[RMDB]
RNA sequence: GGGAACGACUCGAGUAGAGUCGAAAAAGCCAAAGAAUGGGGAGUGGGAUUGGUGGCAGUGUUUGCCGAUAACGAAAGCGUACCUAUAUGUGGCGCCGGCAGUGCUAAGCACAAUAGAGAACAGGGAACAUAACACUUACUUCGGUAAGUGUUAUGUAAAAGAAACAACAACAACAAC
Reactivity to DMS in 0.01 (KOAc 150mM, MgCl2 10mM, bicine 150mM(pH8.5), 24C), signal-to-noise 7, nucleotides 027 to 126: a100g010c030c030a070a080a090g010a100a100u000g000g000g010g010a120g030u010g010g000g010a110u000u000g020g020u010g010g010c040a050g010u000g010u010u000u000g020c030c030g010a100u010a080a090c130g010a070a080a130g010c030g010u000a100c050c040u000a110u010a090u010g020u000g010g020c020g000c020c020g010g000c050a050g010u000g010c040u000a080a110g020c030a030c040a040a090u000a080g010a090g010a040a070c080a060g000g000g010a170
Reactivity to 2A3 in 0.01 (KOAc 150mM, MgCl2 10mM, bicine 150mM(pH8.5), 24C), signal-to-noise 4, nucleotides 027 to 126: a000g070c040c010a040a070a020g160a100a090u170g000g020g010g000a100g050u070g000g030g020a080u000u100g030g000u040g060g000c030a030g020u030g030u130u100u050g020c030c010g030a040u070a100a070c110g080a150a030a000g020c030g030u070a180c030c020u110a090u030a060u300g050u060g030g000c000g000c010c010g000g050c020a030g010u030g070c030u080a100a010g010c020a000c000a040a060u120a080g090a000g000a060a010c010a020g070g010g000a030